RNA sequence: GGGAACGACUCGAGUAGAGUCGAAAAGAUAGGUUUAAUAUACAUCUAUCCGCACAUGUAUAUUAAACGUGCGACGGAUUUCGGUACGGUGGACAUGCGAAAGCAUGUCCAUCGUACUGAAAUCCGAGCUCGUACUAGGGUUCGCCCUAGUACGAGCAAAAGAAACAACAACAACAAC
Reactivity to DMS in 0.01 (KOAc 150mM, MgCl2 10mM, bicine 150mM(pH8.5), 24C), signal-to-noise 4, nucleotides 027 to 126: g000a180u000a070g000g010u000u000u000a000a010u000a000u010a010c000a000u000c070u000a130u010c120c170g010c120a130c300a020u000g010u010a000u000a010u000u000a000a010a010c010g010u000g010c100g020a250c010g010g000a020u000u000u010c000g000g000u000a000c000g040g010u000g000g000a010c000a000u000g010c010g010a120a080a180g000c000a000u010g010u000c000c000a000u000c010g010u000a000c000u000g000a000a000a000u000c000c000g000a020